[RMDB]
RNA sequence: GGGAACGACUCGAGUAGAGUCGAAAAGUGUCGGACUCGCAAGUGCGAAUAUAUUUUAUGCCUAAACAGGGAGUGGAAAGCACGUCCUGGAGUGGAAAACACGUCCAUCCCAAAGCGAGAAAUGAAAGUGUUCAUUGGUAUUCGUACCAAUGAACACAAAAGAAACAACAACAACAAC
Reactivity to 2A3 in 0.01 (KOAc 150mM, MgCl2 10mM, bicine 150mM(pH8.5), 24C), signal-to-noise 2, nucleotides 027 to 126: g110u100g050u030c020g020g060a070c000u000c020g060c060a090a100g050u020g150c030g060a110a010u140a000u000a060u060u090u050u050a080u130g060c000c000u080a150a110a050c030a020g030g000g000a030g030u020g000g130a130a040a080g270c000a010c040g120u070c000c000u000g000g020a040g000u130g020g070a080a090a000a000c010a000c030g060u030c000c000a030u000c000c000c000a000a020a010g060c060g040a050g110a070a130a030u210g010a100a080a010
Reactivity to DMS in 0.01 (KOAc 150mM, MgCl2 10mM, bicine 150mM(pH8.5), 24C), signal-to-noise 1, nucleotides 027 to 126: g010u010g020u000c020g000g000a080c000u000c010g000c050a200a160g010u000g010c010g000a070a100u000a070u010a080u000u000u020u010a050u010g000c010c000u000a070a070a140c070a030g000g000g000a050g080u000g000g010a080a150a300g020c010a010c000g000u020c020c000u000g000g020a070g030u000g060g000a080a080a100a060c100a010c080g000u010c000c100a020u000c000c010c000a040a060a090g000c000g000a020g010a170a060a100u000g020a040a100a070